[RMDB]
An RNA of 177 nucleotides, treated with DMS and read out base by base. For DMS the reverse transcriptase was MarathonRT. For DMS, 987 sequencing reads were counted.
RNA sequence: GGGAACGACUCGAGUAGAGUCGAAAAGAUAUGGAGCCUAGAAGCUGCGAUAAGUCGCAUUCGGAAACGAAUGGUCGACUUUUGACGCAGCCUAGGCUCCUAAGUCAAAGGACCCUUCGGGGUCCAACACGUCAUCUGUGUUCGCACAGAUGACGUGAAAAGAAACAACAACAACAAC
Reactivity to DMS in 0.01 (KOAc 150mM, MgCl2 10mM, bicine 150mM(pH8.5), 24C), signal-to-noise 1, nucleotides 027 to 126: g000a050u000a300u000g000g010a020g000c020c000u000a040g050a160a110g040c000u000g040c000g020a220u000a020a010g000u000c000g000c010a020u000u000c030g000g000a080a070a230c000g010a030a010u000g000g000u010c010g000a010c000u000u000u000u000g030a300c050g000c000a000g000c020c000u000a000g000g000c000u010c010c010u010a000a040g000u000c020a110a150a240g030g000a000c000c000c010u000u040c240g030g000g010g040u030c090c010a110a060
Source: RMDB library TTRDES, as collected in RNAgym.